[RMDB]
RNA sequence: GGGAACGACUCGAGUAGAGUCGAAAAAGUUUGUAUAAGCACUGUUUAAAGUUCCCAGUGCAUGCCAAUUGGUGUUUACAGACGAGUAUGGUAUUGACCAUAUGAUACUAUUCUCUCUCUCAGGAGAGGAGAAUAGAUAACUACAAAGGAGCUACAAAGGUGAUUUUAAUUUCGAUUAAAAUCACCUAAAAGAAACAACAACAACAAC
Reactivity to DMS in 0.01 (KOAc 150mM, MgCl2 10mM, bicine 150mM(pH8.5), 24C), signal-to-noise 2, nucleotides 027 to 156: a180g010u000u000u000g010u000a060u000a040a190g020c000a050c060u000g020u000u010u000a080a090a110g000u000u000c000c030c000a090g030u000g010c040a120u000g000c040c040a060a140u000u030g020g010u000g060u000u000u000a090c080a100g000a120c060g000a180g010u000a010u000g030g010u000a260u000u000g040a070c010c000a020u010a010u000g000a250u010a050c000u010a000u000u000c000u010c000u000c000u000c000u000c220a250g060g010a060g020a020g010g000a030g000a020a010u000a000g000a130u000a040a100c030u000a200c090a050a120a160g010g000a080g000c040u000a050c090a060a160
Reactivity to 2A3 in 0.01 (KOAc 150mM, MgCl2 10mM, bicine 150mM(pH8.5), 24C), signal-to-noise 2, nucleotides 027 to 156: a010g010u060u110u000g060u030a090u010a270a040g000c000a000c000u000g090u060u260u140a100a200a000g000u010u020c000c000c000a000g010u000g010c020a000u060g010c000c050a280a300u150u300g000g000u080g000u050u120u000a000c000a010g040a000c010g000a040g020u010a000u000g000g000u040a110u260u260g180a070c000c000a000u000a020u020g060a020u020a030c010u000a010u000u000c020u000c000u000c000u020c010u010c110a130g050g150a010g020a010g070g050a020g000a000a000u000a000g000a000u030a040a070c080u090a040c040a000a110a020g000g000a010g000c030u040a050c080a030a240
This 207-nucleotide RNA was probed chemically with DMS and 2A3. Conditions: 150 mM KOAc, 10 mM MgCl2 and 150 mM bicine (pH 8.5), 24 C. For 2A3, 1,136 sequencing reads were counted. For 2A3 the reverse transcriptase was SuperScript II with manganese. In probing experiments dimethyl sulfate is read out at A N1 and C N3, which are open when not base-paired. DMS adducts were read by reverse transcription with MarathonRT.